[RMDB]
RNA sequence: GGGAACGACUCGAGUAGAGUCGAAAACGAUUGUGCGUCACGUCGGUGGAGAUUCGGCAGAGCGCAACAUGGAGGGUGAACUAGAAGCAGGUACAGACCCGCAGGAAGGUUGUAGUGGUCAUUUCAUUGUGCAGGAGGCCGAGUGUAGCGAUAUGGGCCUCGUUAGUGUUUUCGAACACUAACGAGGAAAAGAAACAACAACAACAAC
Reactivity to 2A3 in 0.01 (KOAc 150mM, MgCl2 10mM, bicine 150mM(pH8.5), 24C), signal-to-noise 1, nucleotides 027 to 156: c050g070a100u050u140g020u020g080c010g040u040c050a040c090g030u040c030g000g030u070g050g070a210g020a130u140u090c050g020g010c000a000g070a040g020c000g000c040a000a010c040a050u060g010g000a010g010g020g040u010g080a040a010c000u000a080g000a170a000g030c030a010g000g040u010a050c020a000g090a130c000c000c000g020c030a010g000g050a080a050g070g010u040u030g060u060a070g060u030g060g020u000c000a020u010u070u040c060a010u040u120g090u080g080c000a030g000g120a000g000g000c020c020g020a020g000u010g000u030a040g000c010g010a000u000a090u080g000g030g050
The record gives the reactivity of an RNA of 207 nucleotides to 2A3. Conditions: 150 mM KOAc, 10 mM MgCl2 and 150 mM bicine (pH 8.5), 24 C. The data come from the RNA Mapping Database (RMDB), library OK3TST. For 2A3 the reverse transcriptase was SuperScript II with manganese.